[RMDB]
RNA sequence: GGGAACGACUCGAGUAGAGUCGAAAAUGAUCCAGCUCCAGGUCCCAACUCUGAUCCCCACCGACAGGCUGAAGAGGCCGACCUAGUGGCUGUCCCUGCCCCUGUGGCUGAGGCAGAGACCACGGUAUCCCCACCAGAAAUUCGUUUCUGGUGGGGAAAAAGAAACAACAACAACAAC
Reactivity to DMS in 0.01 (KOAc 150mM, MgCl2 10mM, bicine 150mM(pH8.5), 24C), signal-to-noise 2, nucleotides 027 to 126: u040g000a170u010c060c010a070g020c020u000c010c040a070g030g030u010c000c020c000a110a060c130u030c010u010g000a090u010c030c010c030c020a110c100c030g000a070c130a070g010g040c010u000g000a140a170g010a200g020g010c010c020g040a070c060c020u020a120g030u000g010g000c000u030g000u010c000c020c000u010g000c020c000c020c160u010g000u070g000g010c010u010g000a040g000g020c000a030g000a130g010a150c020c000a000c000g030g020u050a160